[RMDB]
RNA sequence: GGGAACGACUCGAGUAGAGUCGAAAAGAUAUGGAUCACUGGACUUUUGACGUCGCCCGGUCGGAAACGACCGCAUCGACGAUAAGUCCUGUGAUCCUAAGUCAAACACAGCUGUUCGCAGCUGUGAGAUAAGCCCUUUCUUCGGAAAGGGCUUAUCAAAAGAAACAACAACAACAAC
Reactivity to 2A3 in 0.01 (KOAc 150mM, MgCl2 10mM, bicine 150mM(pH8.5), 24C), signal-to-noise 2, nucleotides 027 to 126: g010a020u030a010u090g000g000a000u000c000a000c000u020g020g010a000c050u070u100u240u300g300a240c170g000u000c020g000c000c040c020g020g000u010c000g020g030a020a030a030c010g010a010c020c020g000c020a090u250c020g000a010c020g080a100u120a260a000g020u000c000c000u000g010u000g020a000u010c000c020u000a000a010g010u010c030a030a040a020c000a010c000a010g020c000u040g030u170u190c270g020c230a000g010c020u020g000u000g000a000
Reactivity to DMS in 0.01 (KOAc 150mM, MgCl2 10mM, bicine 150mM(pH8.5), 24C), signal-to-noise 2, nucleotides 027 to 126: g000a000u000a230u010g000g000a040u000c000a000c000u000g000g010a020c010u000u000u010u000g030a230c100g040u010c000g000c300c300c000g000g010u020c000g000g000a010a040a090c020g000a000c000c000g030c220a080u000c030g000a030c010g000a120u000a010a030g000u000c000c000u010g000u000g000a020u010c000c000u010a000a080g000u000c010a250a120a200c040a000c000a000g010c000u010g010u000u000c280g000c010a000g000c000u000g000u000g000a060

Structure probing data (2A3 and DMS) for a 177-nucleotide construct.
For DMS the reverse transcriptase was MarathonRT.
For 2A3 the reverse transcriptase was SuperScript II with manganese.
The data come from the RNA Mapping Database (RMDB), library TTRDES.
For 2A3, 2,821 sequencing reads were counted.
DMS (dimethyl sulfate) methylates the pairing face of unpaired adenines and cytosines.
The RNA was probed in 150 mM KOAc, 10 mM MgCl2 and 150 mM bicine (pH 8.5) at 24 C.